[RMDB]
RNA sequence: GGGAACGACUCGAGUAGAGUCGAAAAGUCUCCAUUCUGUCUUCCCUGACAAGUCCAGAGAAGGCACUGGGUUGGCAUCCAACAGCUUGGUCACAAGGGAUUUGGUUGUUGGGAGUGCUGGCGUCCUCGACUUCUUCUUUUUCGAAAGAAGAAGUCGAAAAGAAACAACAACAACAAC
Reactivity to 2A3 in 0.01 (KOAc 150mM, MgCl2 10mM, bicine 150mM(pH8.5), 24C), signal-to-noise 2, nucleotides 027 to 126: g020u000c010u000c040c000a040u140u070c040u020g000u000c000u000u000c000c030c000u000g000a060c090a210a040g100u010c010c010a010g020a000g010a030a040g020g000c020a020c060u080g040g040g000u100u060g020g010c000a020u030c000c000a020a020c000a010g040c010u040u080g000g030u030c020a080c140a300a170g280g040g030a000u020u060u080g070g010u020u000g020u000u010g020g000g030a090g040u040g010c020u020g020g010c000g050u050c000c020u000

Structure probing data (2A3) for a 177-nucleotide construct. Values cover nucleotides 27 to 126.